[RMDB]
The record gives the reactivity of an RNA of 170 nucleotides to 2A3 and DMS. The DMS profile rests on 46,965 reads.

RNA sequence: GGGAACGACUCGAGUAGAGUCGAAAACUCCGGGAUUUCUUCUGAUCGGACUGGCUCAUCCUCGGAAACGGGGGCGGCGGCGUCCGUUCUCUAUUCUUUUCUUUUGAAAGAGGAGACGGGUCUCCGCGUACCACUUUCUUCGGAAAGUGGAAAAGAAACAACAACAACAAC
Reactivity to 2A3 in 0.01 (KOAc 150mM, MgCl2 10mM, bicine 150mM(pH8.5), 24C), signal-to-noise 9, nucleotides 027 to 129: c010u010c000c000g020g010g050a120u070u090u030c010u080u000c020u100g060a110u040c020g010g020a020c040u070g030g010c020u020c040a080u060c030c010u020c020g010g040a080a040a030c030g010g000g000g010g000c020g030g000c000g010g010c010g030u010c000c000g010u130u010c000u000c000u020a290u120u030c000u050u070u030u040c080u090u240u140u300g060a040a010a010g010a000g000g000a020g000a000c010g010g000g010u010c020u000c020c000g010c010g020u040a060
Reactivity to DMS in 0.01 (KOAc 150mM, MgCl2 10mM, bicine 150mM(pH8.5), 24C), signal-to-noise 7, nucleotides 027 to 129: c030u030c010c040g000g000g000a060u040u040u020c000u030u030c020u000g000a150u000c000g030g030a130c110u030g040g000c050u000c000a110u000c060c020u020c000g000g000a080a080a120c110g000g010g010g020g050c090g000g000c020g020g030c160g040u040c000c010g040u070u020c020u010c010u000a170u050u020c000u000u010u010u000c020u060u080u070u150g030a010a010a010g000a000g020g000a040g020a040c060g010g020g020u020c030u030c000c000g020c050g000u010a120

Reactivities are given for positions 27 through 129. The data come from the RNA Mapping Database (RMDB), library 15KLIB. For 2A3, 54,763 sequencing reads were counted.